An RNA of 177 nucleotides, treated with DMS and 2A3 and read out base by base. Reactivities are given for positions 27 through 126. 2A3 adducts were read by reverse transcription with SuperScript II with manganese. For DMS the reverse transcriptase was MarathonRT. The RNA was probed in 150 mM KOAc, 10 mM MgCl2 and 150 mM bicine (pH 8.5) at 24 C.
RNA sequence: GGGAACGACUCGAGUAGAGUCGAAAACCUGCUGAACUCCAGGAGGCAAAAGGAACUGGAGAUUGACUUAACUACCAAUGGCCAAUGAUUUUAUCAAUCAUGCCUCCAUAAACACCCAAACAGCAGGCAUAAUUCGCCGAUUCGUCGGCGAAUUAUGAAAAGAAACAACAACAACAAC
Reactivity to DMS in 0.01 (KOAc 150mM, MgCl2 10mM, bicine 150mM(pH8.5), 24C), signal-to-noise 2, nucleotides 027 to 126: c000c010u010g000c020u000g010a140a140c000u000c080c150a140g020g010a080g000g010c030a060a100a160a140g020g010a140a110c080u000g000g000a050g000a060u000u000g040a110c110u000u000a100a100c110u010a090c090c080a010a010u020g030g000c030c040a040a110u020g010a060u020u000u010u030a150u050c260a030a000u000c020a150u000g000c000c000u010c000c010a150u030a020a060a140c170a110c050c030c030a070a080a170c000a040g000c030a010g010g010
Reactivity to 2A3 in 0.01 (KOAc 150mM, MgCl2 10mM, bicine 150mM(pH8.5), 24C), signal-to-noise 2, nucleotides 027 to 126: c010c020u020g020c010u060g030a230a070c020u010c120c040a020g000g020a010g000g040c020a100a110a050a110g080g000a070a120c050u030g000g010a030g000a000u020u050g050a060c030u130u200a180a030c010u130a190c050c010a110a170u060g080g040c010c010a000a020u000g040a050u000u000u080u100a230u210c060a020a000u000c010a000u050g000c000c000u000c000c000a010u060a030a120a020c070a080c010c020c050a020a060a070c010a040g000c000a000g020g000